[RMDB]
RNA sequence: GGGAACGACUCGAGUAGAGUCGAAAAGUUGGGCUUCCGGUGGGUGGGACGCGAACCGCGGUGUGGAUCCCGACGCGGGCCCGAGCGUACGCUCCAUCUUGUGGGGAGAAGGGGUCUGGGCUUGCCAGGACCGUACUGCGUUCGCGCAGUACGGUCCAAAAGAAACAACAACAACAAC
Reactivity to 2A3 in 0.01 (KOAc 150mM, MgCl2 10mM, bicine 150mM(pH8.5), 24C), signal-to-noise 2, nucleotides 027 to 126: g040u040u020g010g010g000c050u220u070c030c010g000g050u070g000g040g020u120g000g040g030a040c000g000c000g110a000a090c000c010g020c010g030g010u130g000u100g080g080a240u060c010c000c010g020a030c010g000c060g010g030g000c030c010c000g000a010g010c060g020u120a040c140g000c000u050c000c000a060u010c070u060u260g000u070g010g000g070g000a080g090a010a080g040g000g000g010u000c020u070g010g000g020c000u030u010g060c050c000a010